[RMDB]
RNA sequence: GGGAACGACUCGAGUAGAGUCGAAAACGACUGGGCCUAUACGGUCGGGUUGCCCGCCAAGAGCGGCGUGGGCGGCGGGCUGGUCGCCGUCGCGCCGGGGCAGCUGGCGAUAGCGGCCUUCUCGCCGCACUAUGGGCGUAUUCGUACGCCCAUAGUGAAAAGAAACAACAACAACAAC
Reactivity to 2A3 in 0.01 (KOAc 150mM, MgCl2 10mM, bicine 150mM(pH8.5), 24C), signal-to-noise 9, nucleotides 027 to 126: c030g020a010c020u080g010g010g020c020c010u150a140u080a220c090g020g000u010c000g000g000g010u020u030g020c010c010c010g030c070c070a180a040g090a020g120c030g020g000c020g000u090g180g030g010c000g000g000c000g000g020g040c060u080g090g040u090c000g000c010c000g010u020c010g000c010g010c000c010g010g000g010g030c030a040g020c010u050g030g000c000g000a010u030a030g040c030g000g010c000c000u020u010c010u010c010g020c000c010g000
Reactivity to DMS in 0.01 (KOAc 150mM, MgCl2 10mM, bicine 150mM(pH8.5), 24C), signal-to-noise 6, nucleotides 027 to 126: c030g010a030c070u000g010g020g000c020c020u010a070u020a160c080g010g000u000c020g010g010g010u010u000g000c030c000c030g010c100c090a100a120g000a120g030c060g020g000c040g020u010g000g020g010c000g010g000c000g010g010g020c070u020g000g010u000c000g010c000c030g020u000c020g010c020g010c070c040g000g010g000g020c080a100g010c030u020g000g020c000g000a030u000a050g020c030g000g000c000c020u000u000c050u000c010g010c000c010g010